[RMDB]
RNA sequence: GGGAACGACUCGAGUAGAGUCGAAAAUGUUUGAUUUCCUCGGUGCGUUCGGGGUCUUUGAUGCACUCGCGGACGGUGGGCGUGCCGAGCAUGACUUCCAUACCCAUGACCCGGCCCCCGCCACUCCGGUGAGCAUAUUAUUCGUAAUAUGCUCACCAAAAGAAACAACAACAACAAC
Reactivity to DMS in 0.01 (KOAc 150mM, MgCl2 10mM, bicine 150mM(pH8.5), 24C), signal-to-noise 4, nucleotides 027 to 126: u010g020u040u030u000g000a110u010u000u000c010c010u010c080g010g020u010g010c060g020u020u010c060g020g010g010g010u000c020u000u020u020g010a070u000g020c090a070c040u040c010g040c100g000g000a060c260g010g050u000g010g020g000c240g000u020g040c000c010g020a020g000c040a020u000g000a080c160u010u030c130c130a090u030a120c290c070c010a000u000g010a140c010c000c010g010g010c000c020c010c030c000g010c010c020a060c140u010c050c110
Reactivity to 2A3 in 0.01 (KOAc 150mM, MgCl2 10mM, bicine 150mM(pH8.5), 24C), signal-to-noise 9, nucleotides 027 to 126: u160g080u040u040u140g130a160u040u030u040c010c010u010c020g020g010u030g030c050g030u020u060c020g030g020g030g060u020c070u070u160u170g170a240u090g020c040a020c040u050c030g150c020g050g020a030c060g020g020u030g010g010g000c110g050u230g010c000c010g000a000g000c010a000u020g020a060c050u210u080c140c030a080u110a150c030c030c010a020u100g160a300c030c030c010g000g000c000c000c000c000c000g000c000c000a020c050u040c030c020

The record gives the reactivity of an RNA of 177 nucleotides to DMS and 2A3. 2A3 adducts were read by reverse transcription with SuperScript II with manganese. DMS adducts were read by reverse transcription with MarathonRT. The reactions ran in a buffer of 150 mM KOAc, 10 mM MgCl2 and 150 mM bicine (pH 8.5), at 24 C.